RNA sequence: GGGAACGACUCGAGUAGAGUCGAAAACAGAUUCACCGCUUCGAUCACUUGGCUGCGGCUGCCGGCGUCGGCUUGGACCUUGAUGAGCGCCAAUUCCCGUGACACCGAGUGCUCGUCGUCCUGCUCGGUGGAUACCUAUAUUCGUAUAGGUAUCCACAAAAGAAACAACAACAACAAC
Reactivity to 2A3 in 0.01 (KOAc 150mM, MgCl2 10mM, bicine 150mM(pH8.5), 24C), signal-to-noise 8, nucleotides 027 to 126: c030a010g080a140u110u110c040a040c100c020g020c030u080u060c040g070a090u060c030a030c100u070u080g070g010c020u060g030c050g040g000c030u040g040c020c010g050g020c040g040u080c030g020g000c000u020u120g050g020a090c010c010u070u090g050a080u090g020a060g020c020g000c000c010a010a090u050u040c010c000c020g030u060g040a050c060a010c030c040g030a030g040u020g020c010u020c030g070u030c020g020u020c010c020u030g040c030u030c070g060
Reactivity to DMS in 0.01 (KOAc 150mM, MgCl2 10mM, bicine 150mM(pH8.5), 24C), signal-to-noise 7, nucleotides 027 to 126: c120a110g000a140u010u010c050a080c060c030g000c070u010u010c040g020a060u000c060a070c080u000u000g010g020c050u000g010c070g010g000c050u000g010c060c050g020g010c070g010u010c050g010g000c050u000u000g010g010a060c050c120u000u000g000a100u010g000a060g010c040g010c040c060a070a190u010u000c030c000c010g010u000g010a150c160a080c070c040g000a060g010u000g010c050u000c040g010u000c040g000u000c020c020u000g010c040u000c090g010